Source: RMDB library OK2TST, as collected in RNAgym.
Structure probing data (DMS and 2A3) for a 177-nucleotide construct.
The reactions ran in a buffer of 150 mM KOAc, 10 mM MgCl2 and 150 mM bicine (pH 8.5), at 24 C.
2A3 is a SHAPE reagent: it acylates the 2'-hydroxyl of flexible nucleotides of all four kinds.
The DMS profile rests on 6,879 reads.
Values cover nucleotides 27 to 126.
2A3 adducts were read by reverse transcription with SuperScript II with manganese.

RNA sequence: GGGAACGACUCGAGUAGAGUCGAAAAGAUGCCGGCACGUAGGCGACGUUCCACGAUGUCCUCGACGUGCAGGGCACCCUCGUGGGUGACGGCGUAGACGGCCUCUGCUUUGAUGUAGCCCGGCGCGCGGUAUAGAGCGUUUCGACGCUCUAUACCGAAAAGAAACAACAACAACAAC
Reactivity to DMS in 0.01 (KOAc 150mM, MgCl2 10mM, bicine 150mM(pH8.5), 24C), signal-to-noise 5, nucleotides 027 to 126: g020a080u000g000c020c030g000g000c040a030c010g000u010a040g010g020c220g010a040c010g020u000u000c080c120a080c170g000a050u000g000u000c010c000u000c020g010a090c110g020u010g010c090a050g010g010g000c010a010c130c040c080u010c150g030u000g020g000g020u000g000a030c020g010g010c020g020u000a060g000a170c050g000g010c060c030u010c020u000g000c060u000u000u000g010a070u010g000u000a090g020c100c020c010g000g010c080g000c130g000
Reactivity to 2A3 in 0.01 (KOAc 150mM, MgCl2 10mM, bicine 150mM(pH8.5), 24C), signal-to-noise 4, nucleotides 027 to 126: g100a030u070g000c000c010g020g000c020a010c120g020u030a010g030g080c020g000a010c010g020u050u060c090c030a030c080g030a040u040g020u010c010c000u030c010g080a110c080g050u080g000c080a060g030g020g000c000a020c030c020c000u100c080g140u220g020g010g030u060g030a000c010g010g010c020g020u020a030g030a080c010g020g010c010c020u000c020u030g080c030u080u090u300g090a120u170g020u070a030g020c010c000c010g050g030c090g000c020g000